[RMDB]
RNA sequence: GGGAACGACUCGAGUAGAGUCGAAAAGAUAUGGAAUUAAUACAUGGCGAAGCAGAGAGCAACAGCGAUGACGUCGGAAACGACGUAUCGACAUGCUCGAUCUUCGCCAUGUAUUAAUUCCUAAGUCCAAUAGUUAUUACUUCGGUAAUAACUAUUGAAAAGAAACAACAACAACAAC
Reactivity to DMS in 0.01 (KOAc 150mM, MgCl2 10mM, bicine 150mM(pH8.5), 24C), signal-to-noise 6, nucleotides 027 to 126: g000a110u010a300u010g000g000a020a010u000u000a000a000u000a010c010a010u000g000g010c000g010a020a020g000c280a030g000a300g000a010g020c000a030a090c300a230g010c010g000a010u010g000a020c010g020u010c000g010g010a130a080a210c010g000a010c010g010u000a010u000c000g000a040c130a260u000g010c010u000c000g000a270u000c000u000u000c000g020c000c000a000u000g000u000a000u000u010a000a000u000u000c000c000u010a010a080g000u000c030